[RMDB]
The record gives the reactivity of an RNA of 177 nucleotides to 2A3 and DMS. DMS (dimethyl sulfate) methylates the pairing face of unpaired adenines and cytosines. It was measured as part of the RMDB library TTRDES. The DMS profile rests on 6,368 reads. The reactions ran in a buffer of 150 mM KOAc, 10 mM MgCl2 and 150 mM bicine (pH 8.5), at 24 C. DMS adducts were read by reverse transcription with MarathonRT. The 2A3 profile rests on 7,911 reads.
RNA sequence: GGGAACGACUCGAGUAGAGUCGAAAAGAUAUGGACUGCGAGUGGAUCGAUAAGUAUCUAUCGGAAACGAUAGAAUACUUUUGACGAUCGCGCAGUCCUAAGUCAAAGUCUCGCUUCGGCGAGACAACUUUGUAAGUAGCUUCGGCUACUUACAAAGAAAAGAAACAACAACAACAAC
Reactivity to 2A3 in 0.01 (KOAc 150mM, MgCl2 10mM, bicine 150mM(pH8.5), 24C), signal-to-noise 4, nucleotides 027 to 126: g020a000u010a000u070g000g010a000c010u020g000c010g010a050g300u300g230g080a040u000c090g080a120u070a300a000g000u000a000u000c000u010a000u010c000g000g010a020a010a000c010g000a000u010a000g020a050a040u010a010c010u020u050u060u300g300a300c150g000a000u000c000g000c000g000c020a000g000u000c000c000u010a000a010g000u000c020a020a090a070g010u000c010u000c000g000c010u040u110c300g140g000c010g020a000g000a000c000a010a010
Reactivity to DMS in 0.01 (KOAc 150mM, MgCl2 10mM, bicine 150mM(pH8.5), 24C), signal-to-noise 3, nucleotides 027 to 126: g010a030u000a090u010g010g000a020c000u000g000c000g000a040g020u010g000g000a000u000c000g020a110u020a010a010g010u000a010u000c000u010a010u000c000g000g010a020a020a050c000g020a020u000a000g000a050a040u000a000c000u000u000u010u020g010a160c100g010a010u000c000g010c000g010c000a010g010u000c000c000u000a000a050g020u000c000a130a150a130g010u000c000u000c000g010c010u000u010c250g010g020c010g010a010g000a000c010a010a060